[RMDB]
An RNA of 177 nucleotides, treated with DMS and 2A3 and read out base by base.
The reactions ran in a buffer of 150 mM KOAc, 10 mM MgCl2 and 150 mM bicine (pH 8.5), at 24 C.
It was measured as part of the RMDB library OK2TRN.
Values are in units of 0.01, from 0 to 300, in steps of 10.
Reactivities are given for positions 27 through 126.
RNA sequence: GGGAACGACUCGAGUAGAGUCGAAAACUGUGCGGACACGGGUGCAGCAUGGUGAGUGCCCAUGGGAGGUUCUCCUGUUGGUGUCGUGCCCAUCUGUGCCACAUGCCCACCUCGCCGAGCCACAGCCGGCAGUUUUGGUGUUCGCACCAAAACUGCCAAAAGAAACAACAACAACAAC
Reactivity to DMS in 0.01 (KOAc 150mM, MgCl2 10mM, bicine 150mM(pH8.5), 24C), signal-to-noise 1, nucleotides 027 to 126: c090u000g000u000g050c040g000g010a080c020a020c070g010g010g010u000g000c060a060g030c170a000u010g000g000u020g000a230g040u020g000c000c020c010a070u020g010g000g000a040g010g000u000u000c080u000c000c000u000g000u000u100g020g000u000g000u000c070g010u000g000c230c020c000a040u010c020u000g010u000g020c040c020a080c090a060u020g000c040c060c000a140c180c070u000c090g030c020c020g010a190g010c070c080a070c240a140g000c110c040
Reactivity to 2A3 in 0.01 (KOAc 150mM, MgCl2 10mM, bicine 150mM(pH8.5), 24C), signal-to-noise 1, nucleotides 027 to 126: c000u040g030u060g010c030g050g030a000c020a000c010g070g000g000u000g000c010a010g000c060a030u020g000g040u130g020a090g070u080g030c020c000c030a000u020g040g000g000a040g090g290u300u160c040u020c020c000u010g050u030u090g010g030u050g060u150c020g070u210g030c000c000c000a030u050c000u000g050u040g020c000c010a060c030a040u180g040c000c000c000a010c010c010u030c040g000c000c000g020a040g000c000c060a090c000a020g070c030c000